[RMDB]
RNA sequence: GGGAACGACUCGAGUAGAGUCGAAAAGAUCCAUGAUGUAAAUGCGCAUGGCAGGGCUAUGCCUGCUUCACAGGCUGCUGUUAAUAUACCAUUUGAAGGUAUCGACCCUUAUAAUUUGCGUGCAAUCGUGAAGUCAGAAAUUCGUUUCUGACUUCACAAAAGAAACAACAACAACAAC
Reactivity to DMS in 0.01 (KOAc 150mM, MgCl2 10mM, bicine 150mM(pH8.5), 24C), signal-to-noise 7, nucleotides 027 to 126: g010a110u010c010c010a120u010g020a070u020g010u000a070a080a090u010g010c060g040c040a040u000g000g020c230a030g000g000g000c100u010a070u010g010c010c000u000g000c110u010u010c290a090c030a040g000g010c020u010g010c060u010g010u000u000a080a110u010a070u000a030c040c010a130u000u010u000g010a170a100g020g010u000a030u000c100g010a150c020c010c030u020u030a120u020a090a110u010u000u000g010c040g030u000g000c190a070a090u000c140
Reactivity to 2A3 in 0.01 (KOAc 150mM, MgCl2 10mM, bicine 150mM(pH8.5), 24C), signal-to-noise 5, nucleotides 027 to 126: g040a020u030c010c000a060u150g030a060u100g060u300a050a110a090u220g000c010g000c020a020u020g080g040c060a020g010g060g000c040u060a010u150g020c000c020u040g020c030u170u110c070a090c000a040g000g000c020u050g000c040u040g060u130u050a200a030u100a020u010a110c010c010a070u120u070u300g210a200a050g000g010u020a020u020c030g090a160c000c010c000u040u020a080u010a100a200u070u090u060g030c030g000u040g030c040a020a120u050c050